Chemical mapping of a 207-nucleotide RNA with DMS and 2A3. 2A3 adducts were read by reverse transcription with SuperScript II with manganese.
RNA sequence: GGGAACGACUCGAGUAGAGUCGAAAAGCAGUAUCUCGUUAGGCGAGGCUCCUAUACAAACACAGGUUGCUGAACUGACGACGUCGAGAGACGCCCAAGAUUAGGACAGGAUAUAUCGAACCAAGGUGAACCUGUCCAGGGUUCGCCCUGGACAGAACCUCUAUUCUCGUUUCGACGAGAAUAGAGGAAAAGAAACAACAACAACAAC
Reactivity to DMS in 0.01 (KOAc 150mM, MgCl2 10mM, bicine 150mM(pH8.5), 24C), signal-to-noise 2, nucleotides 027 to 156: g020c060a100g040u000a080u010c040u000c020g030u000u010a080g020g020c000g010a300g000g040c020u000c010c010u000a060u020a300c080a150a050a140c180a070c070a030g000g010u010u000g020c010u000g000a200a150c040u000g000a240c000g050a020c000g020u010c020g030a270g020a300g020a000c000g000c000c010c070a050a140g000a140u000u000a050g000g000a120c010a110g020g000a070u000a040u020a080u050c040g000a030a110c010c010a020a140g000g030u000g030a040a070c150c010u000g030u000c000c030a010g000g010g030u010u000c300g010c010c000c010u000g020g000a030c020a000g030a020a050
Reactivity to 2A3 in 0.01 (KOAc 150mM, MgCl2 10mM, bicine 150mM(pH8.5), 24C), signal-to-noise 4, nucleotides 027 to 156: g030c040a010g040u110a100u040c020u000c010g020u040u050a120g150g230c070g020a030g020g030c010u030c020c010u090a100u100a230c120a090a190a010c090a010c010a060g080g000u200u130g050c000u020g000a090a000c020u020g010a010c010g020a020c020g000u020c000g010a020g000a010g000a060c010g020c030c020c000a030a010g050a110u110u140a040g030g010a030c030a040g010g030a030u040a010u010a020u160c080g010a040a030c030c040a050a020g100g000u080g050a030a050c010c000u000g000u000c000c000a000g010g000g010u020u080c160g070c040c000c000u000g000g000a000c000a000g000a000a000
The RNA was probed in 150 mM KOAc, 10 mM MgCl2 and 150 mM bicine (pH 8.5) at 24 C. The 2A3 profile rests on 2,779 reads. For DMS the reverse transcriptase was MarathonRT. The data come from the RNA Mapping Database (RMDB), library M2RFPK.